[RMDB]
RNA sequence: GGGAACGACUCGAGUAGAGUCGAAAAUUGCCCCAAGAGGUUGGUCGCUAUCAGAAUCAUCAGUUCAGCACGGUUCUCGGCGAUCACCGGCGGGGGCACCGUCAGCCCAUACGCCGUCUCGUAGGCCAUCAAUUGAUCACUUCGGUGAUCAAUUGAUAAAAGAAACAACAACAACAAC
Reactivity to DMS in 0.01 (KOAc 150mM, MgCl2 10mM, bicine 150mM(pH8.5), 24C), signal-to-noise 4, nucleotides 027 to 126: u010u000g020c000c000c000c020a030a050g010a290g000g000u000u010g040g020u000c000g000c010u020a120u000c210a020g020a020a010u010c010a130u010c090a130g000u000u010c240a130g000c220a090c150g010g010u000u000c000u000c160g020g020c010g000a020u000c000a020c030c010g000g000c300g000g000g000g000g000c000a020c160c060g010u000c120a100g000c040c000c010a120u010a130c110g020c040c020g000u000c090u000c100g000u000a120g010g010c030c150
Reactivity to 2A3 in 0.01 (KOAc 150mM, MgCl2 10mM, bicine 150mM(pH8.5), 24C), signal-to-noise 3, nucleotides 027 to 126: u050u060g010c000c000c000c020a020a010g020a020g120g010u170u190g050g010u030c000g000c000u010a050u270c070a040g010a010a010u000c010a010u030c040a050g130u260u180c110a050g120c120a060c100g000g040u000u010c040u010c060g000g000c000g000a000u000c000a000c000c000g000g000c020g010g020g000g000g010c010a010c000c010g120u100c050a030g060c030c000c000a020u070a100c050g000c030c000g120u040c060u070c180g080u130a080g050g000c010c000